[RMDB]
RNA sequence: GGGAACGACUCGAGUAGAGUCGAAAAGUGGUCGAGUGCGAAGCACUGGGGUAGAGAAAUAAACAGAAAGAGACCUACCCCGUCAGUCAGUCACUCUCUGUCUGAAUCUCUCUCUCAAAGACCACGAGAUUUUAAUAGGGUUCGCCCUAUUAAAAUCAAAAGAAACAACAACAACAAC
Reactivity to 2A3 in 0.01 (KOAc 150mM, MgCl2 10mM, bicine 150mM(pH8.5), 24C), signal-to-noise 9, nucleotides 027 to 126: g010u000g000g000u010c010g010a020g020u030g020c130g180a180a060g020c050a020c060u050g010g000g010g010u090a010g030a000g080a060a130a050u220a060a100a010c030a010g100a040a110a000g060a010g020a010c000c000u020a030c030c030c030c000g050u040c000a000g020u000c000a000g010u020c020a040c100u050c010u000c010u020g020u010c030u030g080a140a110u030c010u000c000u000c000u000c000u000c050a130a080a010g000a000c000c000a000c010g010a020
Reactivity to DMS in 0.01 (KOAc 150mM, MgCl2 10mM, bicine 150mM(pH8.5), 24C), signal-to-noise 4, nucleotides 027 to 126: g010u000g000g000u000c000g000a040g000u000g010c020g000a160a120g010c090a010c040u010g000g000g020g020u010a010g010a040g000a050a060a100u020a080a160a060c090a080g010a030a030a040g000a080g020a080c060c050u000a070c020c040c000c060g000u020c060a040g000u020c140a130g000u000c050a100c070u010c050u010c010u000g010u000c050u030g010a090a100u010c030u000c010u000c020u000c010u000c040a090a080a100g000a010c010c000a010c000g000a100